RNA sequence: GGGAACGACUCGAGUAGAGUCGAAAACAACUUUUGACGCGCGAUGACCUGUUUCAUCACCAUCAUCUGUAAUGCAUUCAGAACGAGCAUAAUUACGAUUACAGCCGGGACGAAACUCCAUCCUGCACCUACUCAGGGUGUUCGCACCCUGAGUAGGAAAAGAAACAACAACAACAAC
Reactivity to 2A3 in 0.01 (KOAc 150mM, MgCl2 10mM, bicine 150mM(pH8.5), 24C), signal-to-noise 2, nucleotides 027 to 126: c010a000a070c080u000u090u040u190g050a090c150g030c010g020c060g070a020u020g050a060c020c020u080g140u060u070u120c050a040u060c020a020c110c000a040u030c000a000u040c000u040g040u120a090a000u080g140c090a070u060u150c110a050g080a210a090c090g020a050g000c030a000u070a120a060u170u080a080c110g100a030u030u080a060c050a030g060c030c010g000g010g000a010c040g020a000a060a000c020u020c000c030a010u020c000c000u040g000c030a060
Reactivity to DMS in 0.01 (KOAc 150mM, MgCl2 10mM, bicine 150mM(pH8.5), 24C), signal-to-noise 1, nucleotides 027 to 126: c100a130a110c220u000u000u000u040g040a160c210g000c040g050c300g000a140u000g000a020c080c070u000g000u000u000u000c050a060u000c050a110c070c050a070u000c140a060u010c010u040g030u000a200a000u000g010c110a000u010u000c070a090g010a010a110c220g000a150g000c060a100u000a140a060u000u000a120c200g000a140u000u000a070c050a020g020c160c060g050g000g020a060c050g070a020a000a170c040u000c020c050a150u000c000c010u000g000c180a270